[RMDB]
RNA sequence: GGGAACGACUCGAGUAGAGUCGAAAAUUAGCCAGGCAUGGCAGUACAUGCCUGUAGUCCUGGUUACUUGGGAGGCUAAGGCAGGAGAAUCGCUUGAACCCAGGAAGAGGAGGUUGCAGUGAGCCAAUAUACUGUGGAGCUUCGGCUCCACAGUAUAAAAAGAAACAACAACAACAAC
Reactivity to DMS in 0.01 (KOAc 150mM, MgCl2 10mM, bicine 150mM(pH8.5), 24C), signal-to-noise 1, nucleotides 027 to 126: u030u000a040g010c050c000a020g010g040c030a100u000g000g000c020a100g000u000a150c130a080u000g000c000c000u010g010u000a070g000u010c010c000u010g000g000u000u000a010c090u000u000g010g010g010a100g000g000c070u010a060a090g000g010c060a030g010g020a130g000a130a090u000c100g040c050u000u000g010a100a100c040c030c050a090g000g000a040a110g030a150g010g000a060g010g010u000u000g000c030a060g030u000g010a060g040c030c020a020a080